[RMDB]
RNA sequence: GGGAACGACUCGAGUAGAGUCGAAAAGAUAUGGAAAUGAACUACUUCCUGCGUUGACGAAGAACUCGGAAACGAGGGAGUCAACGCAGGAAGCAUUUCCUAAGUCAAACUGGUCUUCGGACCAGAAGACAAAUAUAUCGUUCGCGAUAUAUUUGUCAAAAGAAACAACAACAACAAC
Reactivity to 2A3 in 0.01 (KOAc 150mM, MgCl2 10mM, bicine 150mM(pH8.5), 24C), signal-to-noise 5, nucleotides 027 to 126: g020a020u060a030u150g000g000a010a010a010u020g000a080a060c070u210a080c000u300u000c000c000u000g000c010g000u000u000g000a010c020g130a300a150g010a060a020c010u000c010g020g030a060a050a040c010g000a010g020g000g010a020g000u000c000a000a000c000g000c000a000g000g000a000a000g000c000a000u000u000u000c000c000u010a070a010g010u010c010a010a050a110c010u010g000g000u010c010u050u110c300g110g010a000c000c000a000g010a020a010
Reactivity to DMS in 0.01 (KOAc 150mM, MgCl2 10mM, bicine 150mM(pH8.5), 24C), signal-to-noise 8, nucleotides 027 to 126: g000a040u000a300u000g000g010a010a000a010u000g000a070a030c070u020a300c000u000u000c000c000u000g010c000g020u000u000g010a010c000g010a100a170g000a110a220c010u000c000g000g010a090a090a160c010g010a020g000g000g010a080g000u000c000a000a000c000g010c000a000g000g000a000a000g000c000a000u000u000u000c000c000u010a040a100g010u000c030a060a130a190c000u000g010g010u000c000u000u010c170g020g000a010c000c000a000g000a080a100
Overview: The record gives the reactivity of an RNA of 177 nucleotides to 2A3 and DMS. The RNA was probed in 150 mM KOAc, 10 mM MgCl2 and 150 mM bicine (pH 8.5) at 24 C. For 2A3, 27,152 sequencing reads were counted. For DMS the reverse transcriptase was MarathonRT. High DMS reactivity at an A or C suggests that its Watson-Crick edge is free. Source: RMDB library TTRDEL, as collected in RNAgym.